[RMDB]
RNA sequence: GGGAACGACUCGAGUAGAGUCGAAAAGGAGAGUCCCGCUCCUUCAGGUGAACGAUCUCGGUUGUUUCUCUGAAGGCAUGAUCACCCCGUCCGAUGCGGCAGUUCGUGCUUCCGUCGAACGCGAAAGUAAAACCCUAAAGCUUCGGCUUUAGGGUAAGUAGUAUUGCGUGUUCGCACGCAAUACUACAAAAGAAACAACAACAACAAC
Reactivity to DMS in 0.01 (KOAc 150mM, MgCl2 10mM, bicine 150mM(pH8.5), 24C), signal-to-noise 1, nucleotides 027 to 156: g020g000a160g010a140g010u000c030c030c010g000c050u000c010c010u000u000c040a030g010g020u010g020a030a060c030g000a040u000c040u000c130g010g060u010u000g010u010u000u000c000u000c000u000g020a050a030g030g050c040a030u010g010a090u000c050a220c050c020c000c010g040u000c020c030g000a070u000g020c100g020g010c000a080g000u000u010c130g030u000g020c000u000u000c010c000g000u000c030g000a050a050c030g000c010g000a100a090a080g020u000a040a050a090a190c000c010c010u000a010a040a040g020c020u010u000c200g090g040c000u000u000u000a040g010g010g020u010a000a020
Reactivity to 2A3 in 0.01 (KOAc 150mM, MgCl2 10mM, bicine 150mM(pH8.5), 24C), signal-to-noise 2, nucleotides 027 to 156: g080g020a090g010a010g080u040c040c000c000g020c020u040c000c020u000u020c030a080g050g060u110g100a060a040c020g020a020u010c050u080c130g120g000u000u000g020u000u070u020c010u010c010u010g040a010a010g000g000c010a130u160g010a040u110c050a050c000c000c020c020g040u000c000c000g030a060u080g030c000g080g050c000a010g030u160u150c080g100u300g010c030u040u010c010c020g050u070c060g030a030a020c020g020c000g020a040a000a000g070u170a020a060a080a040c000c010c000u010a000a010a000g000c000u050u130c190g090g000c000u010u000u000a000g000g000g000u000a000a000